Description
The data come from the RNA Mapping Database (RMDB), library OK1LIB. The record gives the reactivity of an RNA of 177 nucleotides to 2A3 and DMS. For DMS, 70,970 sequencing reads were counted. Values cover nucleotides 27 to 126. The RNA was probed in 150 mM KOAc, 10 mM MgCl2 and 150 mM bicine (pH 8.5) at 24 C.
RNA sequence: GGGAACGACUCGAGUAGAGUCGAAAAGAGCUUGAUGCUAGAUGGUUCCAAUUGGACAUUGGGACCACUACUUUACCUUGGUAGAGUAGUAUUAUGAUGUCCAUAUCGUAGUAUCUAGCAUCAUGGAGAUAGGAUAGUGAUUCGUUACUGUUCUAUCAAAAGAAACAACAACAACAAC
Reactivity to 2A3 in 0.01 (KOAc 150mM, MgCl2 10mM, bicine 150mM(pH8.5), 24C), signal-to-noise 9, nucleotides 027 to 126: g090a020g050c020u020u010g000a000u000g000c000u000a000g000a000u010g010g010u010u000c000c000a010a010u060u110g200g060a060c060a080u000u000g000g000g000a000c000c000a000c000u000a000c000u010u010u000a010c010c020u130u300g160g000u010a000g000a000g000u000a000g000u000a000u010u000a010u010g020a010u020g150u140c130c040a060u130a000u160c010g000u000a010g010u000a000u000c000u000a000g000c000a000u000c000a000u010g020g020a120
Reactivity to DMS in 0.01 (KOAc 150mM, MgCl2 10mM, bicine 150mM(pH8.5), 24C), signal-to-noise 9, nucleotides 027 to 126: g000a130g010c030u000u000g000a010u000g010c000u000a000g010a010u000g000g010u010u000c000c000a000a010u000u020g020g010a300c190a130u000u000g000g000g000a000c010c000a010c000u000a000c000u000u000u000a000c000c030u030u030g010g010u000a000g000a000g010u000a000g010u000a000u000u000a010u000g000a010u000g010u060c210c190a100u050a090u000c010g010u000a000g010u000a010u000c000u000a000g000c000a010u000c000a000u000g000g010a170